[RMDB]
RNA sequence: GGGAACGACUCGAGUAGAGUCGAAAAUUACCGCCCAGGUUGGGGUGCAGCGUUCCUGCAAUAUCCAGGGCACCUAGGUGCAGCCUUGUAGUUUUAGUGGACUUUAGGCUAAAGAAUUUCACUAGCAAAAAUCUUUAAGGGUUCGCCCUUAAAGAAAGAACUAUCUAUGGUUCGCCAUAGAUAGUUCAAAAGAAACAACAACAACAAC
Reactivity to 2A3 in 0.01 (KOAc 150mM, MgCl2 10mM, bicine 150mM(pH8.5), 24C), signal-to-noise 2, nucleotides 027 to 156: u080u010a060c000c020g030c000c000c000a010g070g000u000u050g010g020g000g020u040g020c020a000g000c010g090u130u140c000c010u010g010c030a050a100u060a050u190c020c010a000g050g030g000c040a010c000c000u050a100g080g000u030g070c020a000g020c000c010u030u100g030u100a020g000u000u010u080u040a010g000u000g000g000a000c000u050u050u020a020g010g020c000u060a090a150a000g060a040a060u050u160u230c010a010c020u030a000g030c050a030a030a110a150a240u010c000u000u020u000a010a010g050g040g000u030u130c190g090c000c000c000u000u000a000a000a000g010a020a010a000